The record gives the reactivity of an RNA of 177 nucleotides to 2A3 and DMS. The 2A3 profile rests on 994 reads. Source: RMDB library M2PK50, as collected in RNAgym. Values are in units of 0.01, from 0 to 300, in steps of 10. For 2A3 the reverse transcriptase was SuperScript II with manganese. Conditions: 150 mM KOAc, 10 mM MgCl2 and 150 mM bicine (pH 8.5), 24 C.
RNA sequence: GGGAACGACUCGAGUAGAGUCGAAAAGGUCGUCUUUUCGAAGACGACCACUGUCGUUCCCAAAACUUUUCGAAACAUGUCGAAAGACAUGCUGAAAGAGAAUUGGUGUGUGUUUCGACACACACAAGACAAAAAUCCAGUUCGCUGGAUUUUUGUCAAAAGAAACAACAACAACAAC
Reactivity to 2A3 in 0.01 (KOAc 150mM, MgCl2 10mM, bicine 150mM(pH8.5), 24C), signal-to-noise 1, nucleotides 027 to 126: g030g000u000c010g010u000c010u000u090u020u120c220g120a020a020g010a000c010g000a010c000c010a020c010u020g020u020c010g000u000u000c050c000c000a000a000a010a010c010u000u030u040u030c030g050a070a000a020c000a010u000g010u000c000g020a030a090a040g000a010c000a000u010g030c000u090g120a120a030a000g080a030g090a100a170u210u220g090g000u040g000u000g000u000g040u000u110u080c240g080a010c000a000c010a010c000a010c000a010a040
Reactivity to DMS in 0.01 (KOAc 150mM, MgCl2 10mM, bicine 150mM(pH8.5), 24C), signal-to-noise 1, nucleotides 027 to 126: g010g000u000c000g010u000c020u000u000u010u000c220g010a050a020g000a010c000g000a010c000c000a030c110u010g050u000c000g000u000u000c000c000c000a020a040a130a100c070u000u000u010u000c010g010a170a050a080c000a010u000g010u000c000g000a160a090a130g030a000c000a000u000g010c040u000g000a090a010a040g000a040g020a190a150u000u000g010g010u000g010u010g010u000g020u000u000u040c210g000a020c020a010c000a000c010a000c010a060a050